RNA sequence: GGGAACGACUCGAGUAGAGUCGAAAAGAAUCUAUCGAGAAGAAAGAAACCACCGUAUCGAUAGAUUCUGUGGAAGAAACGCAGGAAAUAUGUCAUAGUGAAAACUAUGUUAUAGAAAGGUGGUUGAGGGUAUUCUAUUGUUCGCAAUAGAAUACCCAAAAGAAACAACAACAACAAC
Reactivity to DMS in 0.01 (KOAc 150mM, MgCl2 10mM, bicine 150mM(pH8.5), 24C), signal-to-noise 3, nucleotides 027 to 126: g010a030a020u000c000u000a010u000c010g000a010g030a100a140g020a080a070a070g020a080a070a030c000c000a020c010c000g000u030a100u000c010g000a010u000a010g000a010u010u000c000u000g020u010g020g010a140a100g010a120a100a100c060g000c080a070g000g010a060a060a150u000a020u020g000u010c000a000u000a000g010u000g000a090a070a100a030c010u000a010u000g000u000u000a040u010a030g010a090a120a090g000g010u010g000g000u000u000g000a160
Reactivity to 2A3 in 0.01 (KOAc 150mM, MgCl2 10mM, bicine 150mM(pH8.5), 24C), signal-to-noise 6, nucleotides 027 to 126: g020a000a000u020c000u010a000u000c010g020a010g030a150a060g060a110a230a030g090a050a070a000c000c000a000c010c020g040u070a040u040c000g000a000u000a000g000a000u000u000c000u010g020u020g030g060a160a050g050a070a090a010c100g000c100a040g060g170a060a110a070u210a060u090g080u050c000a000u000a010g010u010g120a050a040a000a000c000u000a000u010g010u060u060a040u040a060g130a070a110a010g000g000u000g000g000u000u010g010a030